[RMDB]
RNA sequence: GGGAACGACUCGAGUAGAGUCGAAAAAUCAUAUUCGUAUGAUCAUAUACCGUAGGACGUCCUACCCACCGACGGGUGUGGCGAAGAACUUCGAAAGAGGGGAGCCACACUCCGUCGAGGGACGUCCUAAACGGCCAGUAGUUCGUUCGCGAACUAAAUCUUAAACGUGGUUCGCCACGUUUAAGAUAAAAGAAACAACAACAACAAC
Reactivity to 2A3 in 0.01 (KOAc 150mM, MgCl2 10mM, bicine 150mM(pH8.5), 24C), signal-to-noise 3, nucleotides 027 to 156: a010u030c030a030u050a040u090u130c190g070u070a010u020g030a020u050c080a060u180a060u120a210c000c000g030u000a000g010g000a000c000g000u000c000c020u110a280c050c030c030a040c010c000g000a000c000g020g010g000u000g000u010g010g000c020g040a110a030g020a000a040c010u030u030c030g080a150a070a050g010a000g030g020g000g020a020g020c000c000a000c000a000c030u050c000c010g000u000c000g000a000g000g000g000a000c000g000u000c000c000u000a000a010a000c000g020g020c060c030a110g050u100a010g000u050u000c010g010u010u070c240g000c030g120a000a010c000u030a150a150
Reactivity to DMS in 0.01 (KOAc 150mM, MgCl2 10mM, bicine 150mM(pH8.5), 24C), signal-to-noise 2, nucleotides 027 to 156: a000u000c000a010u000a010u010u020c250g010u000a030u020g010a040u000c020a180u000a160u000a050c010c010g050u020a070g030g010a030c030g010u000c010c020u000a050c020c000c000a300c170c040g000a030c060g040g010g060u000g040u000g000g020c010g020a100a140g010a070a140c010u000u000c010g030a110a070a280g010a030g010g000g000g030a300g010c020c020a020c000a020c010u000c010c020g000u010c030g000a060g010g000g010a020c010g030u000c010c000u000a020a020a050c030g030g030c060c090a130g020u010a030g020u000u000c020g030u000u000c210g050c020g000a050a070c030u000a040a110
Chemical mapping of a 207-nucleotide RNA with 2A3 and DMS. The DMS profile rests on 3,121 reads. Reactivities are given for positions 27 through 156. Reactivities are rounded to 0.1 and cut off at 0 and 3. 2A3 is a SHAPE reagent: it acylates the 2'-hydroxyl of flexible nucleotides of all four kinds. For 2A3, 2,895 sequencing reads were counted. It was measured as part of the RMDB library RNAMAK. Conditions: 150 mM KOAc, 10 mM MgCl2 and 150 mM bicine (pH 8.5), 24 C.